[RMDB]
RNA sequence: GGGAACGACUCGAGUAGAGUCGAAAAACGCCUUGGACGGCUCUAAACCCCAUCUCGCGGUUGAUCCCGGAGCAUGGAGUGCAGGUUACUUCCUUGGGCUAGAAGGUUGCCGUAUGUGCCGCCGACAGACGUCACUAUCCUUCGGGAUAGUGACGUCAAAAGAAACAACAACAACAAC
Reactivity to DMS in 0.01 (KOAc 150mM, MgCl2 10mM, bicine 150mM(pH8.5), 24C), signal-to-noise 1, nucleotides 027 to 126: a090c260g010c060c010u000u000g000g010a070c070g010g030c000u000c040u010a030a180a070c010c020c010c000a020u000c000u000c040g010c030g010g000u020u000g010a090u020c280c000c010g010g000a050g030c260a030u030g010g040a030g010u000g000c260a040g030g010u000u010a110c090u000u000c060c000u000u000g000g020g000c090u070a070g000a070a080g000g000u000u000g000c010c020g000u020a040u000g020u000g000c000c020g040c040c030g030a110c230a180
Chemical mapping of a 177-nucleotide RNA with DMS.